RNA sequence: GGGAACGACUCGAGUAGAGUCGAAAAUGACUGUGGCCUAUAAUUAGGUCAAGUGGCAGCAUAGGUAGACGUGCAAUCAGGGACUAAGUCUGCAGAUGUGACUUGCAUGAGGUGGGCAUGACUGUGCACGCGUCUCAAGUUUCGACUUGAGACGCGUAAAAGAAACAACAACAACAAC
Reactivity to 2A3 in 0.01 (KOAc 150mM, MgCl2 10mM, bicine 150mM(pH8.5), 24C), signal-to-noise 1, nucleotides 027 to 126: u100g040a050c020u070g020u040g110g010c000c000u030a070u030a130a300u270u120a010g000g010u030c020a020a020g060u010g020g040c040a000g000c000a000u010a070g000g020u010a040g020a040c000g020u020g020c050a030a080u070c040a100g010g050g030a000c040u020a060a060g050u000c000u020g000c050a040g000a110u150g020u060g020a090c000u020u090g000c010a020u040g040a050g050g010u050g000g030g000c000a020u020g030a140c060u060g030u030g090c020
Reactivity to DMS in 0.01 (KOAc 150mM, MgCl2 10mM, bicine 150mM(pH8.5), 24C), signal-to-noise 2, nucleotides 027 to 126: u000g030a050c070u000g000u010g010g010c000c020u000a030u000a140a210u000u000a030g020g010u000c010a070a070g030u020g010g010c060a090g010c050a030u000a070g020g030u010a130g010a090c100g010u000g040c060a030a050u000c070a170g010g010g000a070c070u000a050a150g000u000c020u010g050c040a080g000a100u010g030u000g000a080c080u000u000g010c070a030u030g000a070g010g010u000g010g000g010c000a040u000g010a070c080u000g000u000g030c100

Overview: An RNA of 177 nucleotides, treated with 2A3 and DMS and read out base by base. For 2A3, 1,036 sequencing reads were counted. For 2A3 the reverse transcriptase was SuperScript II with manganese. Values cover nucleotides 27 to 126. Conditions: 150 mM KOAc, 10 mM MgCl2 and 150 mM bicine (pH 8.5), 24 C.